An RNA of 207 nucleotides, treated with DMS and 2A3 and read out base by base.
Reactivities are given for positions 27 through 156.
The reactions ran in a buffer of 150 mM KOAc, 10 mM MgCl2 and 150 mM bicine (pH 8.5), at 24 C.
RNA sequence: GGGAACGACUCGAGUAGAGUCGAAAAGGGCUUGACGCAUCGCCCGAAUACGAUGCAUGUGCUUUUGCACUAAGAUAAAUGUCCGUAUGGUAGGGGACGUAGAACCUACUCAUUAAUGUCCGAAGAGUCUGGGACGAUCAUCAGGCGAGACUAAGAACAUUAGGUGCCAUUUCGAUGGCACCUAAUGAAAAGAAACAACAACAACAAC
Reactivity to DMS in 0.01 (KOAc 150mM, MgCl2 10mM, bicine 150mM(pH8.5), 24C), signal-to-noise 1, nucleotides 027 to 156: g030g010g000c010u000u000g020a050c100g050c050a080u010c000g000c000c070c160g020a090a060u000a010c000g040a070u000g000c020a210u000g000u000g030c020u010u010u010u010g010c000a030c040u000a090a060g020a080u010a030a110a060u020g010u000c110c040g030u010a120u000g020g010u000a060g030g010g010g010a150c060g020u000a050g030a100a190c010c000u000a040c010u010c070a090u000u000a040a090u030g000u000c070c020g020a080a160g000a280g010u010c000u000g020g010g010a060c050g030a060u030c050a060u010c020a050g000g010c030g030a110g000a130c040u000a030a030g020a170a110
Reactivity to 2A3 in 0.01 (KOAc 150mM, MgCl2 10mM, bicine 150mM(pH8.5), 24C), signal-to-noise 2, nucleotides 027 to 156: g000g000g020c020u160u200g030a050c050g000c000a010u020c000g000c050c040c030g000a010a000u080a020c050g000a030u000g000c030a050u040g010u020g000c090u080u140u250u300g040c050a040c000u040a030a030g070a140u110a110a200a060u170g010u000c010c040g040u100a030u150g000g030u000a020g000g010g000g010a010c080g000u040a020g070a070a030c040c000u000a000c020u040c060a030u050u130a050a030u120g100u000c000c030g050a190a020g010a060g040u010c040u030g000g060g010a020c110g030a080u110c100a070u010c000a010g060g020c040g060a000g020a060c020u030a060a060g050a030a070